An RNA of 177 nucleotides, treated with 2A3 and DMS and read out base by base. The data come from the RNA Mapping Database (RMDB), library OK2TRN.
RNA sequence: GGGAACGACUCGAGUAGAGUCGAAAACGCCUACCGGUCGUUGGCGCUGGAGCUGGUCGCUCAGCUUGGCCGGAUCGAUGUCCUGGUGUGCUCGGUGGGGACGGGUGGACAUUCAGCAGGUGUCGCCGAGCAGUUCAGGAUUCGUCCUGAACUGCUCAAAAGAAACAACAACAACAAC
Reactivity to 2A3 in 0.01 (KOAc 150mM, MgCl2 10mM, bicine 150mM(pH8.5), 24C), signal-to-noise 2, nucleotides 027 to 126: c050g000c000c010u030a060c010c000g000g020u020c030g090u060u170g100g000c100g000c100u060g170g030a020g010c030u050g020g150u260c080g010c030u060c030a020g000c000u050u120g010g000c020c000g010g030a030u080c030g030a040u060g060u090c020c030u060g050g040u100g080u050g070c010u010c020g080g060u110g000g000g000g060a060c020g000g000g040u060g020g030a020c010a060u090u090c060a160g030c010a010g000g020u050g040u040c020g000c030c000
Reactivity to DMS in 0.01 (KOAc 150mM, MgCl2 10mM, bicine 150mM(pH8.5), 24C), signal-to-noise 2, nucleotides 027 to 126: c140g000c030c020u000a070c030c020g000g020u000c020g030u010u000g050g010c100g020c070u010g040g020a030g020c020u010g010g030u020c210g010c060u000c020a130g020c020u000u000g000g010c020c000g000g010a080u000c060g010a060u020g010u000c030c000u000g020g030u000g020u000g000c020u010c030g000g020u010g020g010g000g010a070c070g020g000g010u000g020g020a080c050a080u020u010c090a100g000c080a050g010g000u000g000u010c050g000c120c040